Chemical mapping of a 207-nucleotide RNA with DMS and 2A3.

RNA sequence: GGGAACGACUCGAGUAGAGUCGAAAAGGGGUCGACGUUUGACGAAAGCGACAUGCUCCGUACCUGAAGCCUCCACGGGUACAGGAGCAACAGCGCUUUCCGAGUCGACGGAGGCACCCAAAACCUACCUUGCCUUGUUCGCAAGGCAAGGUAGGAAGAAUCUUAUCAAGUUCGCUUGAUAAGAUUCAAAAGAAACAACAACAACAAC
Reactivity to DMS in 0.01 (KOAc 150mM, MgCl2 10mM, bicine 150mM(pH8.5), 24C), signal-to-noise 1, nucleotides 027 to 156: g000g030g020g000u000c010g000a060c050g030u000u010u040g000a080c220g020a040a040a020g020c020g010a050c080a210u000g030c010u000c000c000g030u020a000c000c000u020g000a020a150g040c060c000u000c060c020a130c020g010g010g030u000a010c010a190g110g000a020g030c000a020a010c120a080g000c020g000c010u000u000u000c000c020g000a090g000u000c000g010a060c000g040g020a030g000g000c000a070c000c020c000a040a060a130a230c000c000u000a000c000c000u000u010g080c000c010u000u020g020u000u000c290g010c030a040a000g000g000c000a010a000g030g010u010a000g000g010a010a030
Reactivity to 2A3 in 0.01 (KOAc 150mM, MgCl2 10mM, bicine 150mM(pH8.5), 24C), signal-to-noise 5, nucleotides 027 to 156: g060g010g020g010u020c000g000a010c010g010u070u190u240g020a020c010g000a010a000a000g020c000g150a230c140a240u280g000c000u000c000c000g000u010a000c000c000u020g050a120a020g020c010c000u020c010c020a090c040g000g000g000u030a020c090a240g020g000a000g010c000a010a010c060a020g010c000g000c000u010u000u000c010c000g010a010g020u000c000g000a010c010g000g000a000g000g000c000a040c000c000c010a020a110a030a040c000c000u000a000c000c000u000u000g000c000c010u030u020g030u070u120c220g020c170a000a000g000g000c000a000a000g000g000u000a000g000g000a000a000
Conditions: 150 mM KOAc, 10 mM MgCl2 and 150 mM bicine (pH 8.5), 24 C. For 2A3 the reverse transcriptase was SuperScript II with manganese.